RNA sequence: GGGAACGACUCGAGUAGAGUCGAAAAACCGCCGUGGCCGCACUGCUGGUCAGGUAUCGGGGGGUCUUGCCGAGCAACACCGUCGGCAGCAGCGGUGCAGCCCGCCGGAUCCGCCAGACCGCGGCGGAGCAGGGGCGUAUUUCGAUACGCCCCUGCUAAAAGAAACAACAACAACAAC
Reactivity to DMS in 0.01 (KOAc 150mM, MgCl2 10mM, bicine 150mM(pH8.5), 24C), signal-to-noise 1, nucleotides 027 to 126: a180c040c000g030c040c010g050u010g010g000c040c040g070c080a140c130u030g010c040u000g030g030u000c110a090g030g000u010a060u000c080g030g030g030g030g000g030u000c070u000u000g010c000c070g000a070g010c110a090a140c150a040c060c050g010u000c010g000g020c030a050g010c110a060g000c040g000g000u000g000c060a120g000c030c010c050g030c130c060g010g000a110u000c010c000g020c010c010a120g000a140c050c060g040c070g070g000c000g000g000